Record summary:
Chemical mapping of a 207-nucleotide RNA with 2A3. The data come from the RNA Mapping Database (RMDB), library M2RFPK. For 2A3 the reverse transcriptase was SuperScript II with manganese.
RNA sequence: GGGAACGACUCGAGUAGAGUCGAAAAGCUUUUUUUUCGGAUUAGGCGUGGAGGCGCAAGUCACCCUCCUCGCAUCGCAAGUUCGUGCUUGCGACUUACACGUAGGGCGAGGGGUGGGCGAAAGUUGAAAACACGAUGUUGUUCGCAACAUCGUGAAUGACUACCUGUGAUUCGUCACAGGUAGUCAAAAAGAAACAACAACAACAAC
Reactivity to 2A3 in 0.01 (KOAc 150mM, MgCl2 10mM, bicine 150mM(pH8.5), 24C), signal-to-noise 1, nucleotides 027 to 156: g030c040u160u090u000u020u000u000u080u250c100g070g000a060u130u020a050g000g000c030g000u000g010g010a000g040g000c020g000c100a080a000g080u120c090a020c020c000c000u020c000c010u000c020g000c000a010u000c010g010c000a030a020g040u150u220c120g150u300g070c000u000u000g000c000g000a000c000u030u050a060c000a010c020g020u000a030g030g040g000c100g000a010g000g000g000g000u090g000g000g000c020g010a030a000a070g000u020u040g020a070a100a020a070c000a000c010g000a010u000g000u000u000g000u020u010c170g000c110a000a000c010a000u000c000g000u000g000a000a000